Source: RMDB library M2PK50, as collected in RNAgym. Chemical mapping of a 177-nucleotide RNA with DMS and 2A3. Reactivities are given for positions 27 through 126. The RNA was probed in 150 mM KOAc, 10 mM MgCl2 and 150 mM bicine (pH 8.5) at 24 C. For 2A3, 4,147 sequencing reads were counted.
[RMDB]
RNA sequence: GGGAACGACUCGAGUAGAGUCGAAAAGGACUUAGGUUCGCCUAAGUCCAAAUAACGUCUACAAGUACGGUAGACGAAGAUAACGUACAGUACAGAAGUUCAAAAGGAGAGACUUCGGUCUCUCCAACUCUUCUUAACGGUUCGCCGUUAAGAAGAGAAAAGAAACAACAACAACAAC
Reactivity to DMS in 0.01 (KOAc 150mM, MgCl2 10mM, bicine 150mM(pH8.5), 24C), signal-to-noise 3, nucleotides 027 to 126: g020g010a020c000u000u000a010g000g010u010u020c290g000c000c000u000a010a000g000u010c000c000a000a050a060u010a160a110c010g000u000c000u000a000c000a020a050g020u000a010c050g010g010u000a020g000a020c020g010a060a030g000a100u000a100a110c150g000u020a140c220a030g000u000a010c030a200g010a070a070g010u010u000c070a060a040a090a110g000g000a000g010a030g000a010c000u000u000c190g040g010u000c000u000c000u000c000c020a010a030
Reactivity to 2A3 in 0.01 (KOAc 150mM, MgCl2 10mM, bicine 150mM(pH8.5), 24C), signal-to-noise 3, nucleotides 027 to 126: g020g000a010c000u000u000a010g000g010u050u020c160g060c040c000u010a000a000g000u000c000c010a000a000a000u010a000a000c000g000u000c000u010a010c010a150a100g060u000a020c020g010g000u000a010g020a010c030g010a030a020g060a060u160a070a030c080g030u060a050c130a120g030u000a000c010a040g110a150a060g130u110u170c080a060a050a060a080g010g010a010g000a010g020a000c010u020u030c170g020g010u000c000u010c000u000c000c000a000a000